[RMDB]
RNA sequence: GGGAACGACUCGAGUAGAGUCGAAAAACACGAGUCAGCUCAGACUUGUGCGAGUACCGAUUCUGCAAUCGGUGCAGAGUCGAGUCUACGCUGACUUGACUAGUAAGUGAUUGCAGAAUCACUUGCAGUGACUAUUUACGUUCGCGUAAAUAGUCACAAAAGAAACAACAACAACAAC
Reactivity to 2A3 in 0.01 (KOAc 150mM, MgCl2 10mM, bicine 150mM(pH8.5), 24C), signal-to-noise 3, nucleotides 027 to 126: a000c050a000c010g000a000g010u010c010a020g020c030u030c110a020g020a000c000u010u020g080u150g040c020g010a030g020u020a010c020c000g000a010u030u010c080u300g120c190a030a020u010c000g060g020u020g000c020a020g020a010g180u020c010g000a000g000u030c000u000a030c100g030c040u000g000a000c000u000u000g000a010c020u030a040g030u020a010a050g020u010g030a010u000u040g050c120a040g180a070a010u000c000a010c000u000u010g000c040a020
Reactivity to DMS in 0.01 (KOAc 150mM, MgCl2 10mM, bicine 150mM(pH8.5), 24C), signal-to-noise 5, nucleotides 027 to 126: a100c120a220c020g000a000g010u000c000a030g010c060u000c280a110g010a010c010u010u010g020u010g000c000g000a300g030u010a020c030c000g000a010u000u000c200u010g000c220a040a020u000c010g010g020u010g000c040a050g000a300g010u000c000g000a000g010u000c000u000a130c150g000c050u000g000a000c010u000u000g010a100c120u010a070g000u010a020a010g010u010g000a010u000u000g000c290a080g000a020a010u000c000a010c020u000u000g000c030a130